[RMDB]
RNA sequence: GGGAACGACUCGAGUAGAGUCGAAAAUCCCACCCGGCCCACUAGUGAAACUGGUUCAAUCCCAGUAUCGCGCACCACGAUUGACCUGCGGUUUCAUCCACAAAAUCUGGGCUGCGUGAACUAAAUGAACUGACUAACCUUUCGAGGUUAGUCAGUUAAAAGAAACAACAACAACAAC
Reactivity to DMS in 0.01 (KOAc 150mM, MgCl2 10mM, bicine 150mM(pH8.5), 24C), signal-to-noise 3, nucleotides 027 to 126: u020c000c000c010a190c100c090c020g000g000c000c010c020a070c090u020a000g000u000g020a070a140a040c010u010g000g000u030u000c220a050a080u020c090c060c070a030g000u020a100u010c020g000c030g000c020a060c040c000a050c090g010a050u000u000g000a120c190c110u000g000c090g000g000u020u030u010c120a100u030c000c040a070c070a040a040a080a030u000c040u000g000g000g010c150u010g010c030g020u000g000a070a050c060u000a080a070a070u040g010
Reactivity to 2A3 in 0.01 (KOAc 150mM, MgCl2 10mM, bicine 150mM(pH8.5), 24C), signal-to-noise 5, nucleotides 027 to 126: u010c010c000c010a010c000c010c010g020g010c000c000c000a050c050u040a030g010u010g150a080a040a060c030u050g030g000u070u070c030a000a050u060c010c010c010a020g020u040a110u060c030g000c000g010c010a010c010c020a060c060g020a030u010u070g040a070c020c040u070g030c050g010g000u030u160u130c050a090u080c010c020a040c050a070a080a030a020u030c040u050g030g000g000c060u030g000c010g010u020g040a050a040c010u070a040a030a200u180g090